Chemical mapping of a 177-nucleotide RNA with 2A3 and DMS. The DMS profile rests on 1,420 reads. Source: RMDB library OK1LIB, as collected in RNAgym.
RNA sequence: GGGAACGACUCGAGUAGAGUCGAAAAUACAGUCCCAAUAAUCAUGCUUACUGCAAGAGAUACAGAUAUAGAUUAUAUUACAGGGAUAACCUUAGGUAGUGAUGAUUAUUUUACAAAACCAUUUAGCCAUUUAGCUCGCUUUCGAGCGAGCUAAAUGAAAAGAAACAACAACAACAAC
Reactivity to 2A3 in 0.01 (KOAc 150mM, MgCl2 10mM, bicine 150mM(pH8.5), 24C), signal-to-noise 4, nucleotides 027 to 126: u280a040c090a020g100u000c000c000c000a000a000u000a000a000u010c000a010u000g100c000u020u070a020c010u040g200c090a080a070g090a000g010a110u140a150c090a000g130a040u080a000u080a130g130a110u150u100a060u150a080u120u090a090c100a060g130g070g040a100u150a250a120c020c030u080u070a030g080g000u010a030g050u090g180a000u000g010a000u010u020a030u010u050u020u000a130c180a020a050a080a050c020c040a070u170u190u160a050g080c000
Reactivity to DMS in 0.01 (KOAc 150mM, MgCl2 10mM, bicine 150mM(pH8.5), 24C), signal-to-noise 2, nucleotides 027 to 126: u040a130c300a130g000u000c000c000c050a100a040u000a020a000u000c010a010u000g020c020u000u050a030c040u000g030c140a040a030g010a240g030a100u020a200c060a120g000a060u020a040u000a000g000a080u000u000a130u000a050u030u050a030c110a080g040g000g000a120u010a080a050c100c020u020u040a110g000g050u000a000g000u010g040a010u010g000a010u030u000a000u000u000u010u000a070c140a050a120a090a130c130c190a040u020u040u000a140g000c190